The record gives the reactivity of an RNA of 207 nucleotides to DMS and 2A3. The DMS profile rests on 1,259 reads.
RNA sequence: GGGAACGACUCGAGUAGAGUCGAAAAAGCAAGACCCAGAAGGGUACAAAGUCUAUGGUCUUGGAGAAUGGGGAGAAACUGGUGGAGCAAUACUUAAAAAUUAUGUUAUACAUGAAUUUCCUACAGAAUCUGAGUAUUUUGACAAUAUGAGGUUAUCCCCCUAAUUCUAGUUCGCUAGAAUUAGGGGAAAAGAAACAACAACAACAAC
Reactivity to DMS in 0.01 (KOAc 150mM, MgCl2 10mM, bicine 150mM(pH8.5), 24C), signal-to-noise 1, nucleotides 027 to 156: a100g020c030a130a050g000a300c000c010c040a130g020a180a080g020g000g040u000a110c070a060a050a110g010u030c020u000a150u040g010g000u000c050u000u000g040g000a120g010a110a120u010g050g030g060g010a190g010a090a060a040c010u000g030g030u020g020g020a080g000c040a030a100u000a090c080u030u020a030a050a060a050a110u000u000a050u000g000u000u000a090u010a120c030a010u000g000a100a080u010u000u020c070c020u010a080c000a110g020a190a050u020c060u000g000a110g020u000a040u000u000u030u000g000a070c040a070a050u000a050u000g010a100g010g000u010u000a170u000c000
Reactivity to 2A3 in 0.01 (KOAc 150mM, MgCl2 10mM, bicine 150mM(pH8.5), 24C), signal-to-noise 2, nucleotides 027 to 156: a010g000c030a010a020g010a020c020c020c030a020g140a070a090g070g010g000u060a040c050a000a150a000g030u000c020u060a110u130g010g010u000c000u010u040g010g010a070g020a060a070u070g010g000g000g040a070g030a000a090a000c050u070g050g000u010g030g010a040g020c040a090a030u060a060c040u150u210a090a050a050a120a020u170u070a080u130g020u000u180a150u040a120c030a020u040g040a050a090u140u040u080c040c000u060a040c000a060g100a050a050u090c010u010g020a050g050u040a040u030u190u050u030g010a060c020a000a020u040a060u090g000a020g040g000u010u000a080u080c010